[RMDB]
RNA sequence: GGGAACGACUCGAGUAGAGUCGAAAAAGUGCGGUCUACGGACCGCACAGUAUCUCCCCUCGGGGGGAGACAGAAUUCGCGCUUGCGGGAAUUCAGAGGGAGGACACAGGCCACUACGGUGGCCUGAGACAGGAAGAAGGUUCGCCUUCUUCCUGUCAAAAGAAACAACAACAACAAC
Reactivity to 2A3 in 0.01 (KOAc 150mM, MgCl2 10mM, bicine 150mM(pH8.5), 24C), signal-to-noise 4, nucleotides 027 to 126: a000g000u000g010c030g030g030u010c030u080a150c300g060g000a000c000c000g000c000a000c000a000g000u030a040u010c000u000c000c000c030c020u150c180g300g010g010g010g000g000a010g000a000c020a040g040a010a010u040u030c040g000c000g010c300u070u180g010c050g070g080g020a000a020u040u000c000a010g040a030g090g090g010a090g000g050a020c070a000c000a130g000g000c000c000a000c020u030a030c180g090g000u000g000g010c000c000u000g000a000
Reactivity to DMS in 0.01 (KOAc 150mM, MgCl2 10mM, bicine 150mM(pH8.5), 24C), signal-to-noise 2, nucleotides 027 to 126: a090g030u000g020c000g030g010u000c020u000a140c130g030g010a020c000c020g030c000a000c000a020g000u010a110u000c000u000c000c000c000c000u010c210g020g010g000g010g010g010a010g000a050c180a080g000a020a050u000u000c010g000c000g020c030u030u000g010c000g010g000g000a020a010u000u010c020a120g030a110g000g010g010a130g010g000a240c100a140c010a000g000g000c000c000a010c000u010a050c130g020g000u000g020g000c000c000u020g000a030
This 177-nucleotide RNA was probed chemically with 2A3 and DMS. Reactivities are given for positions 27 through 126. The RNA was probed in 150 mM KOAc, 10 mM MgCl2 and 150 mM bicine (pH 8.5) at 24 C.